The data come from the RNA Mapping Database (RMDB), library M2RFPK. Chemical mapping of a 207-nucleotide RNA with DMS and 2A3. Conditions: 150 mM KOAc, 10 mM MgCl2 and 150 mM bicine (pH 8.5), 24 C. 2A3 adducts were read by reverse transcription with SuperScript II with manganese.

[RMDB]
RNA sequence: GGGAACGACUCGAGUAGAGUCGAAAAACCUUAUUUUGAGAUGCUGAGGGAUUUGGCCCAUAGAAGCUUCAGCAACCGACUUUAAAUAGCACGGUGCUAAUACCAACGAGCAACUCGAAUGAUAAGUAAAACGUUGACAAGUUCGCUUGUCAACGAAGGUAAUACACAUCUUCGGAUGUGUAUUACCAAAAGAAACAACAACAACAAC
Reactivity to DMS in 0.01 (KOAc 150mM, MgCl2 10mM, bicine 150mM(pH8.5), 24C), signal-to-noise 1, nucleotides 027 to 156: a150c040c020u000u000a060u000u000u000u020g000a080g000a050u000g070c040u000g010a140g040g000g020a170u000u010u010g010g020c000c000c000a090u000a120g000a050a030g030c030u000u010c070a080g020c040a040a020c020c000g030a040c000u000u010u010a020a170a060u000a010g020c020a070c040g040g000u000g020c020u000a040a060u000a090c020c000a060a090c120g000a080g020c030a030a090c000u000c040g000a100a040u010g000a130u030a020a120g010u000a080a050a040a130c000g010u000u000g000a000c010a000a010g010u010u000c300g010c000u000u000g030u000c000a010a010c000g010a000a000
Reactivity to 2A3 in 0.01 (KOAc 150mM, MgCl2 10mM, bicine 150mM(pH8.5), 24C), signal-to-noise 4, nucleotides 027 to 156: a000c030c000u060u080a090u020u030u030u080g030a020g010a020u020g000c040u030g010a110g040g040g020a070u060u130u160g050g000c000c030c010a050u070a080g100a110a030g030c000u150u110c060a000g010c000a040a020c000c010g030a010c000u110u060u100a120a200a300u140a140g010c030a010c040g000g000u010g000c000u010a020a020u070a130c010c010a030a030c060g050a020g020c000a020a010c010u000c020g030a040a020u040g040a020u050a120a020g040u080a030a160a030a030c010g000u000u000g000a000c000a000a000g010u010u050c140g100c160u000u000g000u000c000a000a000c000g010a020a000